[RMDB]
RNA sequence: GGGAACGACUCGAGUAGAGUCGAAAAUGUGCGGGCUCGUGAGGUAGACGAUUCGGUCGCCGUCGUAGGACUCGAGGACGGUCUCGGCGUCCUGGGAGAAAUCGUCGUCCUUCGAGAGUUCGUACUCUAGUGGUGGGACUUUCGAGUCCCACCACUAAAAAGAAACAACAACAACAAC
Reactivity to 2A3 in 0.01 (KOAc 150mM, MgCl2 10mM, bicine 150mM(pH8.5), 24C), signal-to-noise 2, nucleotides 027 to 126: u190g000u000g020c020g000g000g000c070u120c140g220u300g060a000g000g010u050a070g000a010c000g000a030u050u080c030g020g000u020c000g000c060c000g020u070c040g040u110a030g000g120a030c000u010c050g090a130g040g200a110c170g070g030u130c110u050c070g000g050c000g040u010c010c010u080g000g060g020a170g120a050a070a000u000c000g000u000c000g050u000c000c000u000u030c030g110a150g000a000g030u000u010c020g000u000a000c020u010c020
Source: RMDB library OK1LIB, as collected in RNAgym. Chemical mapping of a 177-nucleotide RNA with 2A3.